[RMDB]
RNA sequence: GGGAACGACUCGAGUAGAGUCGAAAAAGAGGCGGGAUGGCAGCAGGUUAUCCGAGGCUGUUAGGCGGGCAUGUAGUGUAACAGUCGGCGAGGGAUACCAAGCUACAUGAACGGCGGGACCACGGUCUGAUCCCAGCCCUCAUCUGUCAGACCAGGACCAGUUGAAGGUAUUCGUACCUUCAACUGGAAAAGAAACAACAACAACAAC
Reactivity to 2A3 in 0.01 (KOAc 150mM, MgCl2 10mM, bicine 150mM(pH8.5), 24C), signal-to-noise 2, nucleotides 027 to 156: a000g080a010g030g070c050g000g010g010a040u030g010g020c050a000g000c020a030g070g020u190u140a010u100c010c010g040a060g030g010c000u010g010u000u000a030g020g020c100g040g000g030c000a040u090g020u070a010g050u020g040u090a060a050c010a040g060u040c030g060g050c050g040a090g010g080g020a030u050a070c020c010a030a020g040c000u020a020c000a030u040g030a100a000c050g070g030c050g030g010g020a020c020c060a050c110g010g030u010c020u020g020a010u000c020c000c000a010g000c000c040c010u000c010a110u000c000u020g060u050c000a030g020a070c000c000a000g030g060a070
Chemical mapping of a 207-nucleotide RNA with 2A3. Values cover nucleotides 27 to 156. Conditions: 150 mM KOAc, 10 mM MgCl2 and 150 mM bicine (pH 8.5), 24 C.